Chemical mapping of a 177-nucleotide RNA with DMS and 2A3. The reactions ran in a buffer of 150 mM KOAc, 10 mM MgCl2 and 150 mM bicine (pH 8.5), at 24 C. The DMS profile rests on 3,851 reads. The data come from the RNA Mapping Database (RMDB), library OK2TST. For 2A3 the reverse transcriptase was SuperScript II with manganese.

RNA sequence: GGGAACGACUCGAGUAGAGUCGAAAAUUCGCACAUAUCGGUAAAUAGCUUGCCUGCUCUUAUUCUUUCGGUCAUUGGCAUGUUCAAUGCGAUCACUCCGUUAUGAUAUGUUGGUCGGAUAAGGCGCAUAGCCUCACAUGUUCGCAUGUGAGGCUAUAAAAGAAACAACAACAACAAC
Reactivity to DMS in 0.01 (KOAc 150mM, MgCl2 10mM, bicine 150mM(pH8.5), 24C), signal-to-noise 3, nucleotides 027 to 126: u000u010c050g010c030a130c060a040u010a040u000c030g000g010u000a030a090a100u010a090g030c050u010u000g010c050c030u000g010c040u000c050u000u000a070u010u010c080u000u020u010c050g010g010u000c090a040u000u000g000g020c000a040u000g010u000u000c120a070a040u000g000c020g010a050u010c090a140c110u000c020c020g000u010u010a090u010g000a040u010a030u000g000u000u000g030g020u000c040g010g000a050u020a050a080g010g000c060g020c160
Reactivity to 2A3 in 0.01 (KOAc 150mM, MgCl2 10mM, bicine 150mM(pH8.5), 24C), signal-to-noise 2, nucleotides 027 to 126: u040u020c030g000c060a020c020a050u080a010u040c060g040g010u040a050a070a060u120a120g020c030u030u070g040c000c000u010g000c010u030c010u110u040a120u130u010c040u040u080u060c020g060g030u050c020a020u050u160g120g020c010a030u040g040u010u140c040a050a040u060g000c000g030a040u020c000a020c080u000c010c010g040u030u030a130u130g040a040u020a020u080g090u100u050g090g020u060c000g000g040a010u070a110a070g020g000c030g000c070